[RMDB]
RNA sequence: GGGAACGACUCGAGUAGAGUCGAAAAGGGGUCCACCGAAACUCCAUUGUCAGCUUCGGGUGCUGAAGCCUCCACGGCAUCUCUAGCGUGAGCUUGGAUUUAUGGAGAGAUAGCUGUGGACGGAGGCACCCAACCUCCGCGGGUUCGCCCGCGGAAAACUGAUAUUGUGGUUCGCCACAAUAUCAGUAAAAGAAACAACAACAACAAC
Reactivity to 2A3 in 0.01 (KOAc 150mM, MgCl2 10mM, bicine 150mM(pH8.5), 24C), signal-to-noise 1, nucleotides 027 to 156: g010g030g020g010u040c100c040a070c010c190g030a140a030a010c050u040c030c020a060u060u110g190u150c070a080g040c030u290u230c130g020g040g010u010g020c000u070g010a100a050g030c000c040u000c000c000a030c010g000g000c010a010u020c020u000c000u020a100g190c030g070u110g070a010g110c090u230u280g220g080a190u190u140u150a040u190g030g020a040g000a000g000a000u040a060g000c000u000g000u010g010g000a020c070g000g000a020g020g000c000a000c000c000c000a000a020c010c010u000c000c000g000c050g010g050g060u020u040c130g040c110c000c020g000c000g000g000a000a040a000